[RMDB]
An RNA of 207 nucleotides, treated with 2A3 and DMS and read out base by base. The DMS profile rests on 1,331 reads. The data come from the RNA Mapping Database (RMDB), library OK3TST.
RNA sequence: GGGAACGACUCGAGUAGAGUCGAAAAGAUCGUGAGUUCUCUCACACGAGUGAGAUCGAACACGAACGAGUUCGAGUGAGAACGAGAGUGUACACACGAUCACGAGAACGUGUUCGAACACGAGUUCGUGAGUGAGAUCUCACGAGAUCGUGUUCACGGAGAAAACAUCUUUCGAGAUGUUUUCUCCAAAAGAAACAACAACAACAAC
Reactivity to 2A3 in 0.01 (KOAc 150mM, MgCl2 10mM, bicine 150mM(pH8.5), 24C), signal-to-noise 4, nucleotides 027 to 156: g050a020u010c000g010u010g000a040g000u070u020c010u000c000u000c000a050c010a020c070g050a060g050u090g040a070g020a060u040c040g000a030a010c060a000c090g070a140a030c060g040a050g040u000u000c010g010a050g060u030g050a140g050a140a060c080g010a040g010a000g110u140g050u240a040c040a000c000a010c040g000a020u020c040a010c060g090a110g020a040a050c060g010u050g000u080u070c060g000a050a030c070a020c040g020a020g010u040u020c000g000u000g000a000g010u040g050a090g000a050u050c000u000c000a000c000g000a000g000a010u010c030g000u020g010u080u020c020a040c080
Reactivity to DMS in 0.01 (KOAc 150mM, MgCl2 10mM, bicine 150mM(pH8.5), 24C), signal-to-noise 1, nucleotides 027 to 156: g000a100u000c000g020u000g040a140g000u000u020c010u000c000u000c010a140c020a060c190g010a300g000u000g030a110g000a120u000c010g000a030a070c010a110c050g070a100a160c100g010a090g030u000u000c000g050a260g020u000g000a170g050a070a140c100g000a240g010a250g010u000g000u000a150c090a120c010a020c000g050a190u000c000a140c110g010a220g020a020a160c030g000u000g000u000u000c060g010a000a040c070a020c020g010a040g000u000u000c000g040u000g050a130g000u000g000a250g000a080u010c000u000c000a010c050g000a000g000a000u010c010g000u010g000u000u000c050a080c140
The reactions ran in a buffer of 150 mM KOAc, 10 mM MgCl2 and 150 mM bicine (pH 8.5), at 24 C.